[RMDB]
RNA sequence: GGGAACGACUCGAGUAGAGUCGAAAACAGGUUUCGACCUGAAACGCCCGUAGGAAGCGUUGUCAGUCCGAAAGAUUACAUCGAUCUUCGAAAGAGGGGAGUAAUCUGAGGACUUGGAUUUACGCUUCCUAAACGGUACCUUCGUAUUCGUACGAAAAUGAGAUAUAAAGUUCGCUUUAUAUCUCAUAAAAGAAACAACAACAACAAC
Reactivity to DMS in 0.01 (KOAc 150mM, MgCl2 10mM, bicine 150mM(pH8.5), 24C), signal-to-noise 3, nucleotides 027 to 156: c060a070g000g020u000u000u010c180g020a110c020c000u000g000a070a070a130c070g020c100c010c030g040u010a050g000g000a020a010g020c000g010u000u000g010u000c020a070g020u000c000c000g020a200a120a030g000a040u000u000a020c010a200u000c120g010a100u010c010u000u010c030g010a150a100a270g010a080g030g010g020g000a090g010u000a000a010u000c010u020g010a300g010g010a030c010u010u000g010g010a020u000u010u010a010c000g000c010u010u000c000c000u000a000a030a020c040g000g000u000a090c050c040u000u000c010g030u000a110u010u000c170g030u000a060c010g000a040a070a210
Reactivity to 2A3 in 0.01 (KOAc 150mM, MgCl2 10mM, bicine 150mM(pH8.5), 24C), signal-to-noise 5, nucleotides 027 to 156: c000a010g000g040u060u140u170c180g130a060c010c000u010g030a020a000a020c130g050c000c000c000g010u000a000g000g010a000a000g000c000g000u010u030g010u020c000a000g000u010c010c000g040a080a060a000g000a000u010u000a010c070a210u140c080g150a140u030c020u050u010c040g090a130a100a080g010a020g000g030g000g000a020g000u000a000a000u000c010u020g030a040g010g020a000c000u000u060g000g010a000u230u080u110a000c000g000c000u000u000c000c000u000a000a010a000c010g000g040u090a060c010c030u010u030c010g020u040a050u040u090c180g050u050a010c020g090a060a170a030